RNA sequence: GGGAACGACUCGAGUAGAGUCGAAAACACCAGCAGGGACCCUCCAAGAGCCUCUGCUGAAUUUAUGUGGCUGACAAAGGAAAACAAUUUUCUGAGCUGCCUAUUUAAGAACCCCUCAGCACAGCUAAAUCAUACGGCCAUUCGUGGCCGUAUGAUUAAAAGAAACAACAACAACAAC
Reactivity to DMS in 0.01 (KOAc 150mM, MgCl2 10mM, bicine 150mM(pH8.5), 24C), signal-to-noise 3, nucleotides 027 to 126: c110a150c240c000a030g010c020a040g000g010g010a070c020c060c040u010c220c270a090a080g040a080g030c010c010u000c030u000g010c000u030g000a030a020u040u040u030a020u040g000u000g000g010c010u000g000a130c060a040a110a010g000g000a000a010a050a170c210a070a150u040u000u000u020c000u000g000a110g000c000u000g000c040c000u000a030u020u000u010a080a040g030a190a090c050c000c020c060u010c050a060g000c070a090c080a070g020c070u010a090
Reactivity to 2A3 in 0.01 (KOAc 150mM, MgCl2 10mM, bicine 150mM(pH8.5), 24C), signal-to-noise 2, nucleotides 027 to 126: c020a080c040c000a000g050c040a030g050g000g000a110c010c040c100u110c100c000a060a030g010a000g040c000c000u060c000u050g010c000u000g010a030a030u030u030u010a160u160g090u070g010g000c010u000g080a190c020a070a230a000g080g020a020a030a030a090c110a090a150u030u070u060u010c010u070g000a000g030c020u000g050c010c000u030a110u050u100u050a080a080g040a040a040c040c000c000c000u070c010a010g000c040a040c000a060g010c000u040a070